Structure probing data (2A3) for a 207-nucleotide construct. The RNA was probed in 150 mM KOAc, 10 mM MgCl2 and 150 mM bicine (pH 8.5) at 24 C. Source: RMDB library RNAMAK, as collected in RNAgym.
RNA sequence: GGGAACGACUCGAGUAGAGUCGAAAACGCUGGGAUCUCCUCAUCUGGGAGCAUACUGAAGCGCGCACGGUAUGCGAAGAACAGAGAGGAGGAUCCUGUGCUGAAGCGCGCACGGCAACCGAAAGGUGCGAAACGGACUUUAGUUCGCUAAAGUCCGGCCACUCAGUGAGUUCGCUCACUGAGUGGCAAAAGAAACAACAACAACAAC
Reactivity to 2A3 in 0.01 (KOAc 150mM, MgCl2 10mM, bicine 150mM(pH8.5), 24C), signal-to-noise 2, nucleotides 027 to 156: c050g020c000u010g020g000g000a020u010c010u000c000c010u000c020a300u010c040u030g120g080g130a220g010c000a010u020a000c000u020g120a270a130g000c020g000c000g000c000a010c010g000g000u020a010u020g050c050g090a190a040g030a200a020c000a000g010a030g000a010g010g000a000g000g010a000u000c000c010u000g000u010g000c000u020g020a140a110g020c010g000c000g000c000a000c000g010g000c000a000a010c000c000g040a050a030a010g000g020u020g000c000g010a080a090a020c010g000g010a000c000u000u000u030a010g010u040u170c250g040c170u000a000a000a000g000u010c000c000g010